The record gives the reactivity of an RNA of 177 nucleotides to DMS. The DMS profile rests on 1,380 reads. For DMS the reverse transcriptase was MarathonRT.
RNA sequence: GGGAACGACUCGAGUAGAGUCGAAAAGAUAUGGAUCUAGGCAACAGCUAUCACGUCGGAAACGACGUAUAGACAUGCCUAAUCCUAAGUCAAAAGGGGCAGUAUCCGUUCGCGGAUACUGCCCCAAGAUACUGUACAGCUUCGGCUGUACAGUAUCAAAAGAAACAACAACAACAAC
Reactivity to DMS in 0.01 (KOAc 150mM, MgCl2 10mM, bicine 150mM(pH8.5), 24C), signal-to-noise 2, nucleotides 027 to 126: g000a010u000a240u020g010g000a010u000c190u000a000g000g010c000a030a070c280a070g000c000u000a000u000c210a010c000g040u000c000g000g000a070a050a120c000g000a020c000g010u020a000u000a000g000a080c070a270u000g000c000c000u010a010a020u000c000c000u000a030a130g010u010c030a090a050a150a130g010g010g000g050c000a030g010u000a000u000c000c000g000u000u000c180g010c000g030g000a050u000a000c000u020g000c000c000c000c010a000a000